[RMDB]
RNA sequence: GGGAACGACUCGAGUAGAGUCGAAAAAGACGUGUACGCACGUCACACCGUGGCGGCGGUGUAAAACAAACAUUAAGCCGCCAGCGUCCCAGAACAAGGCAUUUUCCGAUUCUCCGGGGGUUGCAAAAAAACUGAACUUGGUUCGCCAAGUUCAGAAGUAAAGAUAAAGGUUCGCCUUUAUCUUUACAAAAGAAACAACAACAACAAC
Reactivity to DMS in 0.01 (KOAc 150mM, MgCl2 10mM, bicine 150mM(pH8.5), 24C), signal-to-noise 3, nucleotides 027 to 156: a060g010a030c000g050u000g010u010a070c280g030c020a020c020g000u010c020a190c050a060c030c010g020u000g020g090c030g080g120c030g000g010u000g010u000a050a120a120a180c230a200a200a050c020a040u020u020a030a150g030c000c010g030c000c010a020g010c020g000u000c000c000c020a170g010a060a110c070a090a110g000g010c080a140u000u000u000u000c020c010g000a240u010u000c030u000c050c020g010g010g010g000g010u010u000g010c010a020a020a090a090a070a100a190c010u000g000a010a010c000u000u000g000g010u010u000c300g000c000c010a000a010g000u010u000c000a000g000a020a080
Reactivity to 2A3 in 0.01 (KOAc 150mM, MgCl2 10mM, bicine 150mM(pH8.5), 24C), signal-to-noise 3, nucleotides 027 to 156: a000g000a000c020g000u010g010u040a030c240g030c110a000c000g010u010c010a000c020a020c000c020g060u030g000g000c020g010g000c010g020g030u020g010u050a160a200a030a030c060a040a140a000c020a020u070u120a190a050g000c000c000g000c000c000a010g050c010g040u020c010c010c010a020g080a080a050c100a080a050g090g020c050a040u040u040u060u080c030c030g040a060u120u040c070u070c120c010g020g010g000g000g020u060u060g000c010a040a020a060a020a020a010a070c000u010g000a000a000c000u000u000g000g020u030u020c060g020c080c000a000a010g000u000u010c000a000g000a010a010